[RMDB]
RNA sequence: GGGAACGACUCGAGUAGAGUCGAAAAAUAUUGGUGUCGGCAUUGUUAUCGGGUUGUGCUGGCAAGCAGGUCUUUGAUACUGAAGUCGAAAAGAAAGCUAUUCGUGGUGAUAAUGGCGCUGAAAUACCCUUCAUAGGGUUUUCGAACCCUAUGAAGGAAAAGAAACAACAACAACAAC
Reactivity to DMS in 0.01 (KOAc 150mM, MgCl2 10mM, bicine 150mM(pH8.5), 24C), signal-to-noise 3, nucleotides 027 to 126: a110u010a090u010u000g000g030u000g020u010c030g020g000c070a060u010u000g000u010u000a040u010c080g010g010g010u000u000g010u000g030c040u000g000g020c100a060a100g000c040a060g010g000u000c030u000u010u000g010a080u000a060c120u000g010a070a060g020u000c020g000a050a060a060a090g000a070a080a140g010c060u000a070u010u010c060g020u000g020g030u010g000a040u000a040a080u000g000g010c040g000c070u010g000a070a050a080u010a110c150
Reactivity to 2A3 in 0.01 (KOAc 150mM, MgCl2 10mM, bicine 150mM(pH8.5), 24C), signal-to-noise 2, nucleotides 027 to 126: a000u150a060u030u100g110g030u020g030u080c020g000g030c020a030u040u050g050u050u130a080u130c010g020g040g010u030u040g060u040g050c030u000g040g000c020a010a030g040c010a000g020g090u020c020u110u250u170g090a100u130a130c020u110g060a060a030g040u070c070g040a020a090a030a090g060a030a040a000g000c020u010a020u060u070c040g080u080g060g000u040g000a000u050a150a060u120g020g000c000g000c040u010g020a000a080a020u110a050c020
Conditions: 150 mM KOAc, 10 mM MgCl2 and 150 mM bicine (pH 8.5), 24 C. This 177-nucleotide RNA was probed chemically with DMS and 2A3. For DMS the reverse transcriptase was MarathonRT. For DMS, 2,633 sequencing reads were counted. The data come from the RNA Mapping Database (RMDB), library OK2TRN. The 2A3 profile rests on 1,786 reads.